[RMDB]
RNA sequence: GGGAACGACUCGAGUAGAGUCGAAAACGCUGGGACACAGCCACGGGGAGCUAUCUGAAGCGCGCACGGAUAGCAUCGAUCCGGUGGAACUACUGUGUCCUGUGCUGAAGCGCGCACGGCAACCGAAAGGUGCGAUCAGACAGGUUCGCCUGUCUAAGUUAACUACAACGUUCGCGUUGUAGUUAACAAAAGAAACAACAACAACAAC
Reactivity to DMS in 0.01 (KOAc 150mM, MgCl2 10mM, bicine 150mM(pH8.5), 24C), signal-to-noise 2, nucleotides 027 to 156: c100g030c020u010g030g000g020a020c010a020c040a030g000c050c030a060c010g010g000g000g010a120g000c000u000a010u020c000u020g020a060a070g030c000g050c020g020c010a300c040g000g010a030u000a030g000c000a150u000c170g030a120u010c000c000g010g000u000g030g010a080a040c060u010a280c010u010g000u010g010u000c010c060u040g000u000g020c020u000g000a120a050g020c000g010c030g060c000a300c040g020g000c010a160a150c060c040g000a060a140a170g010g020u000g030c040g000a120u000c090a070g000a000c010a030g000g000u000u010c300g010c020c000u020g030u010c010u010a000a120
Reactivity to 2A3 in 0.01 (KOAc 150mM, MgCl2 10mM, bicine 150mM(pH8.5), 24C), signal-to-noise 6, nucleotides 027 to 156: c050g010c020u100g020g000g000a000c000a000c000a010g010c000c000a000c010g020g000g000g010a040g010c000u000a000u000c000u020g060a250a070g010c010g000c010g000c010a020c010g010g000a000u000a010g000c020a070u300c050g020a040u020c010c010g130g060u060g010g020a020a030c070u210a050c010u300g000u000g000u010c000c000u010g000u030g000c020u070g030a160a040g010c000g000c000g000c010a010c010g050g000c020a080a120c020c000g070a130a030a030g000g010u040g010c030g020a110u180c030a010g000a000c000a000g000g070u090u100c170g120c080c000u000g000u010c010u010a040a040
The record gives the reactivity of an RNA of 207 nucleotides to DMS and 2A3. The RNA was probed in 150 mM KOAc, 10 mM MgCl2 and 150 mM bicine (pH 8.5) at 24 C. The 2A3 profile rests on 10,730 reads. For 2A3 the reverse transcriptase was SuperScript II with manganese. DMS adducts were read by reverse transcription with MarathonRT. It was measured as part of the RMDB library RNAMAK.